Source information
An RNA of 177 nucleotides, treated with 2A3 and DMS and read out base by base. For 2A3 the reverse transcriptase was SuperScript II with manganese. Source: RMDB library OK2TRN, as collected in RNAgym. The reactions ran in a buffer of 150 mM KOAc, 10 mM MgCl2 and 150 mM bicine (pH 8.5), at 24 C.
RNA sequence: GGGAACGACUCGAGUAGAGUCGAAAAGCGCAUCGCGUAGCUACGAUAUCGAUGCAUAUCGCGGCAUAUCGGCGCAUUAGCGCAUGCAUCGCGCGCGAUGCCGUAUACGAUGCCGGCGCAUCGCGUACGCUACUCGCGCAUUCGUGCGCGAGUAGCGAAAAGAAACAACAACAACAAC
Reactivity to 2A3 in 0.01 (KOAc 150mM, MgCl2 10mM, bicine 150mM(pH8.5), 24C), signal-to-noise 1, nucleotides 027 to 126: g020c010g030c040a020u010c020g010c040g070u120a060g000c010u050a030c150g030a040u000a030u140c150g140a110u100g040c090a000u020a010u070c100g000c000g090g000c030a010u060a030u090c070g080g000c030g020c000a010u070u280a030g030c000g030c070a010u020g000c000a120u070c080g030c020g000c000g000c010g050a000u010g000c040c010g050u040a070u000a010c060g000a000u030g020c050c020g150g000c090g010c040a000u000c000g000c000g060u010a040
Reactivity to DMS in 0.01 (KOAc 150mM, MgCl2 10mM, bicine 150mM(pH8.5), 24C), signal-to-noise 1, nucleotides 027 to 126: g020c240g070c000a030u010c040g070c040g030u000a050g030c010u000a040c070g010a010u000a020u000c000g010a140u000g020c150a040u000a000u000c050g020c050g000g010c040a160u000a080u000c090g040g020c110g020c030a100u000u010a070g000c020g000c050a080u000g000c070a050u000c150g050c140g040c030g000c000g000a000u000g000c030c030g020u000a020u000a040c000g010a000u000g000c010c120g000g000c260g020c010a020u000c010g000c020g000u000a020